The record gives the reactivity of an RNA of 177 nucleotides to 2A3 and DMS.
For DMS the reverse transcriptase was MarathonRT.
DMS (dimethyl sulfate) methylates the pairing face of unpaired adenines and cytosines.
[RMDB]
RNA sequence: GGGAACGACUCGAGUAGAGUCGAAAAACAGCCAAUACCGCUGUAUGAUCACCAGCAAGCAAGCGGAUCCAUGCAUAUUGAAUCGUAUUGGUAUCCUGAAAUUCAUCAACUAAAAUAGCCUGGAAGACAUUUAUGAGGGUUUCGACCCUCAUAAAUGAAAAGAAACAACAACAACAAC
Reactivity to 2A3 in 0.01 (KOAc 150mM, MgCl2 10mM, bicine 150mM(pH8.5), 24C), signal-to-noise 3, nucleotides 027 to 126: a000c020a010g040c000c000a020a020u060a050c050c020g030c020u020g000u020a030u030g020a040u010c030a040c180c030a020g030c030a070a050g060c020a130a000g020c030g050g000a010u000c070c020a000u020g000c020a030u110a120u150u230g060a120a080u150c050g020u030a030u020u040g000g020u040a040u000c000c000u060g080a090a060a050u140u040c000a040u020c010a080a070c010u100a060a050a110a220u100a040g050c020c030u050g090g040a040a030g070a040
Reactivity to DMS in 0.01 (KOAc 150mM, MgCl2 10mM, bicine 150mM(pH8.5), 24C), signal-to-noise 4, nucleotides 027 to 126: a070c190a090g010c010c020a030a030u000a040c100c110g030c070u010g010u000a030u000g000a050u000c060a100c100c050a080g030c050a050a150g040c170a110a070g030c080g000g000a050u000c060c060a020u000g000c040a030u010a160u010u010g010a060a100u010c130g010u010a050u000u000g010g000u000a070u000c010c020u010g030a060a070a070u000u000c040a060u010c040a030a070c080u010a070a070a120a060u000a090g010c030c040u000g010g020a080a100g000a160